[RMDB]
RNA sequence: GGGAACGACUCGAGUAGAGUCGAAAAAUACAUUAUCGUCUGCGGUACUUGUAGUGCUAAAUGAAUGUGGGCCCUCCGUGUGCGUGUGAACUAAUUGAACUAGCACUCCGUUGGUCACCGAACAAUCAACGUGGCAUGGAUUCGUCCAUGCCACGUUAAAAGAAACAACAACAACAAC
Reactivity to DMS in 0.01 (KOAc 150mM, MgCl2 10mM, bicine 150mM(pH8.5), 24C), signal-to-noise 1, nucleotides 027 to 126: a010u000a020c060a040u000u000a160u030c040g030u010c140u000g020c120g020g000u000a010c150u000u070g030u040a000g030u040g020c050u000a160a030a140u000g040a060a050u000g040u030g000g040g000c000c030c040u000c040c140g020u020g000u000g040c030g000u040g030u020g040a110a060c100u000a170a080u000u070g010a090a180c090u000a020g000c040a120c000u000c120c040g000u000u000g000g000u020c000a050c030c040g060a050a130c180a160a000u000c090
Reactivity to 2A3 in 0.01 (KOAc 150mM, MgCl2 10mM, bicine 150mM(pH8.5), 24C), signal-to-noise 2, nucleotides 027 to 126: a020u060a030c000a000u010u240a040u220c150g080u090c070u040g050c090g030g000u000a000c010u040u100g020u040a050g010u010g060c000u000a000a180a130u150g080a030a060u080g000u030g040g000g000c020c000c000u000c010c010g000u000g030u030g020c080g000u100g000u000g030a070a130c130u220a060a020u100u110g020a000a010c000u040a060g000c000a000c000u000c000c020g020u000u000g010g000u080c040a000c010c050g020a050a000c000a000a120u170c030
Source: RMDB library RFM100, as collected in RNAgym. Structure probing data (DMS and 2A3) for a 177-nucleotide construct. For DMS the reverse transcriptase was MarathonRT. Values cover nucleotides 27 to 126. Values are in units of 0.01, from 0 to 300, in steps of 10. The RNA was probed in 150 mM KOAc, 10 mM MgCl2 and 150 mM bicine (pH 8.5) at 24 C.